[RMDB]
Conditions: 150 mM KOAc, 10 mM MgCl2 and 150 mM bicine (pH 8.5), 24 C. This 177-nucleotide RNA was probed chemically with DMS and 2A3. For 2A3 the reverse transcriptase was SuperScript II with manganese. The data come from the RNA Mapping Database (RMDB), library OK1LIB.
RNA sequence: GGGAACGACUCGAGUAGAGUCGAAAAUGGACUAGCCGUAGUGGCGAACAACGACCUGAUAGGGUGCCGCAGAGACCCACUAUUAGGCUAGUAUAAAAAUCUCUGCGGAAUAUAGACAGAAAAUUAAAUCCCAUAGGUAGUUCGCUACCUAUGGGAUAAAAGAAACAACAACAACAAC
Reactivity to DMS in 0.01 (KOAc 150mM, MgCl2 10mM, bicine 150mM(pH8.5), 24C), signal-to-noise 3, nucleotides 027 to 126: u060g000g000a040c000u000a000g020c000c000g000u000a020g030u000g000g000c300g010a220a170c270a110a120c100g000a070c030c020u000g010a240u020a070g020g030g020u020g010c000c030g000c000a030g000a000g000a070c300c000c000a000c000u000a000u030u030a160g030g000c010u000a000g010u010a000u000a000a000a010a020a030u000c000u000c000u000g000c020g000g010a140a050u000a080u020a050g020a150c230a110g000a120a010a050a100u020u040a070a080
Reactivity to 2A3 in 0.01 (KOAc 150mM, MgCl2 10mM, bicine 150mM(pH8.5), 24C), signal-to-noise 2, nucleotides 027 to 126: u210g100g130a020c000u000a010g000c000c000g050u000a000g010u000g010g000c010g050a010a100c080a050a000c020g180a050c000c000u060g010a180u210a150g000g120g000u040g050c000c010g000c000a000g000a000g000a120c010c040c000a020c000u010a020u060u120a090g000g000c000u000a000g000u000a000u020a000a000a000a000a000u000c000u000c000u000g000c000g000g080a040a030u200a020u160a060g030a040c180a010g260a050a260a000a000u160u150a070a080